[RMDB]
RNA sequence: GGGAACGACUCGAGUAGAGUCGAAAAAGAUCGAGGUCACUUUCGACAUCGACGCCAACGGCAUUGUGCACGUCACCGCCAAGGACAAGGGCACCGGCAAGGAGAACACGAUCCGAAUCCAGGAAGGCAAGUCGACAUCUUUCGAGAUGUCGACUUGAAAAGAAACAACAACAACAAC
Reactivity to 2A3 in 0.01 (KOAc 150mM, MgCl2 10mM, bicine 150mM(pH8.5), 24C), signal-to-noise 4, nucleotides 027 to 126: a020g060a070u010c010g030a050g010g020u030c020a050c140u140u290u280c100g010a010c000a000u030c030g030a060c000g000c000c010a100a050c060g050g000c030a100u110u100g040u060g030c060a040c090g070u050c130a000c030c030g030c000c020a040a130g050g000a040c070a010a080g000g000g030c010a030c040c010g050g000c020a040a100g070g010a030g030a030a030c050a000c040g040a040u030c010c010g030a010a000u000c020c040a080g190g030a070a030g070g040
Reactivity to DMS in 0.01 (KOAc 150mM, MgCl2 10mM, bicine 150mM(pH8.5), 24C), signal-to-noise 2, nucleotides 027 to 126: a060g020a120u030c000g030a070g030g030u000c000a150c300u000u020u030c160g010a000c000a010u000c000g000a060c020g010c000c050a080a120c070g000g030c010a160u000u000g060u000g000c020a060c150g010u000c090a080c010c040g020c100c000a100a120g040g000a040c030a090a130g000g030g000c020a030c060c000g000g000c030a050a080g000g020a060g000a070a160c020a040c080g020a020u000c000c000g000a120a070u010c030c050a050g000g020a060a120g030g000

Record summary
The record gives the reactivity of an RNA of 177 nucleotides to 2A3 and DMS. The 2A3 profile rests on 1,935 reads. DMS (dimethyl sulfate) methylates the pairing face of unpaired adenines and cytosines. The data come from the RNA Mapping Database (RMDB), library OK1LIB. DMS adducts were read by reverse transcription with MarathonRT. The reactions ran in a buffer of 150 mM KOAc, 10 mM MgCl2 and 150 mM bicine (pH 8.5), at 24 C.